Structure probing data (2A3 and DMS) for a 207-nucleotide construct. It was measured as part of the RMDB library RNAMAK. Conditions: 150 mM KOAc, 10 mM MgCl2 and 150 mM bicine (pH 8.5), 24 C. The DMS profile rests on 6,408 reads. DMS adducts were read by reverse transcription with MarathonRT. The 2A3 profile rests on 11,575 reads.
RNA sequence: GGGAACGACUCGAGUAGAGUCGAAAACGCUGGGCAUAGUCGAAGAACUGUGAGAACGCUCCUGAAGCGCGCACGGGAGCGACACAGGGAGACUGGGCCUGUGCUGAAGCGCGCACGGCAACCGAAAGGUGCGAAAUUAGAUGGUUCGCCAUCUAAACAAGGUAAUAAUCUUCGGAUUAUUACCUUGAAAAGAAACAACAACAACAAC
Reactivity to 2A3 in 0.01 (KOAc 150mM, MgCl2 10mM, bicine 150mM(pH8.5), 24C), signal-to-noise 7, nucleotides 027 to 156: c060g000c000u030g010g000g000c010a020u020a030g000u010c020g180a300a020g010a060a020c000u010g010u020g020a100g070a300a080c130g000c000u000c000c000u050g040a190a030g010c000g000c000g000c000a020c040g000g000g000a000g000c000g050a010c000a000c000a000g010g010g000a040g000a000c000u010g000g030g000c010c000u050g070u090g000c030u090g040a110a020g000c000g000c000g000c000a000c010g090g000c030a140a140c010c010g060a110a040a020g030g000u030g010c030g040a060a090a030u060u030a020g000a010u010g010g050u040u040c120g070c070c010a000u000c010u020a000a010a010
Reactivity to DMS in 0.01 (KOAc 150mM, MgCl2 10mM, bicine 150mM(pH8.5), 24C), signal-to-noise 3, nucleotides 027 to 156: c090g030c010u000g010g020g000c010a050u000a030g020u000c030g000a140a200g000a130a240c000u000g010u000g010a270g020a070a180c050g010c000u000c000c020u000g000a040a100g020c000g020c040g070c000a300c050g020g020g020a080g050c010g000a070c040a010c010a050g000g000g000a050g010a080c020u000g020g010g040c010c000u010g020u010g010c000u010g010a060a070g020c020g040c010g010c000a240c070g000g000c010a120a140c020c010g010a060a110a180g000g010u000g000c020g010a070a090a210u010u000a020g010a050u000g010g010u000u000c300g000c010c000a010u000c000u000a010a050a300